[RMDB]
RNA sequence: GGGAACGACUCGAGUAGAGUCGAAAAAGCUCAACAGCGUAAAGGUGCUGAACAAAAUCGCGCUCACGUAAGGUGGCAGCGCUCACAUCACCUUCCUCGUCAAUCCGCACCCUCGCGCGCGCAAAGAGGUGCAUAGUACGUUCGCGUACUAUGCACCAAAAGAAACAACAACAACAAC
Reactivity to 2A3 in 0.01 (KOAc 150mM, MgCl2 10mM, bicine 150mM(pH8.5), 24C), signal-to-noise 1, nucleotides 027 to 126: a020g070c070u100c060a100a200c070a220g110c070g140u180a080a110a000g020g000u000g050c030u010g030a080a020c040a020a070a050a050u130c070g000c020g000c040u010c030a020c030g130u170a060a070g270g010u040g070g090c000a030g050c030g050c000u080c020a090c010a040u050c010a020c020c000u080u040c000c020u060c050g070u030c000a030a040u000c020c010g000c040a030c030c000c020u030c010g000c030g000c010g010c000g030c060a170a000a000g080a020
Reactivity to DMS in 0.01 (KOAc 150mM, MgCl2 10mM, bicine 150mM(pH8.5), 24C), signal-to-noise 2, nucleotides 027 to 126: a060g010c010u000c030a080a190c150a060g070c050g000u000a080a120a080g000g020u010g000c030u010g010a110a120c150a030a050a130a170u010c150g000c000g010c010u010c000a040c050g020u040a080a110g010g010u010g000g000c160a040g010c010g020c020u000c150a050c030a060u000c030a010c010c010u000u000c010c010u000c120g020u000c080a090a050u010c020c030g020c020a100c010c010c010u000c200g000c020g030c070g030c030g060c080a080a070a110g010a080

Annotation:
This 177-nucleotide RNA was probed chemically with 2A3 and DMS. For 2A3, 1,099 sequencing reads were counted. Conditions: 150 mM KOAc, 10 mM MgCl2 and 150 mM bicine (pH 8.5), 24 C. Values cover nucleotides 27 to 126.